Source: RMDB library OK3TST, as collected in RNAgym. Chemical mapping of a 207-nucleotide RNA with 2A3 and DMS. DMS adducts were read by reverse transcription with MarathonRT. The RNA was probed in 150 mM KOAc, 10 mM MgCl2 and 150 mM bicine (pH 8.5) at 24 C. Values are in units of 0.01, from 0 to 300, in steps of 10. 2A3 adducts were read by reverse transcription with SuperScript II with manganese.
RNA sequence: GGGAACGACUCGAGUAGAGUCGAAAAGACACUUUAGGUGCGUCCUUGUCUGCUAUGUGAUCAUAGGCUAUUGCUGUACCUGUUACUUUGGUGUGUUUAACCUCUUAAACAGGUUGUUUAGGUGCACAUUAGGCACAUAUGACUACGUAGUCAGCUCCGCUAUCCCAAGAUUCGUCUUGGGAUAGCGAAAAGAAACAACAACAACAAC
Reactivity to 2A3 in 0.01 (KOAc 150mM, MgCl2 10mM, bicine 150mM(pH8.5), 24C), signal-to-noise 3, nucleotides 027 to 156: g060a030c020a000c030u170u170u270a170g040g040u040g050c200g050u050c010c000u020u110g040u040c020u000g020c000u020a000u020g040u020g010a120u020c010a010u010a030g030g000c000u020a050u000u060g090c110u010g040u030a000c000c000u020g100u200u050a050c110u170u050u180g100g040u180g050u020g100u100u060u130a030a040c010c030u030c090u050u200a090a090a060c030a000g000g000u030u030g060u040u130u130a010g010g000u010g000c000a000c000a050u020u030a070g160g000c070a040c010a230u030a010u000g000a000c010u010a000c030g020u000a000g070u200c010a020g020c030u040c020
Reactivity to DMS in 0.01 (KOAc 150mM, MgCl2 10mM, bicine 150mM(pH8.5), 24C), signal-to-noise 2, nucleotides 027 to 156: g030a270c010a000c060u000u000u000a100g070g010u000g000c000g020u010c030c030u000u000g050u000c030u000g000c020u000a040u010g020u000g030a060u000c020a050u000a030g020g030c000u000a030u000u000g020c070u010g070u000a030c010c020u010g050u000u000a080c080u010u010u000g030g010u000g090u010g030u000u000u000a070a070c080c060u000c050u000u000a070a050a140c070a040g010g030u000u000g000u000u000u000a040g020g010u000g000c040a040c050a090u000u000a060g010g000c070a080c130a150u000a000u010g000a020c000u000a060c060g000u010a040g000u010c010a070g010c060u000c020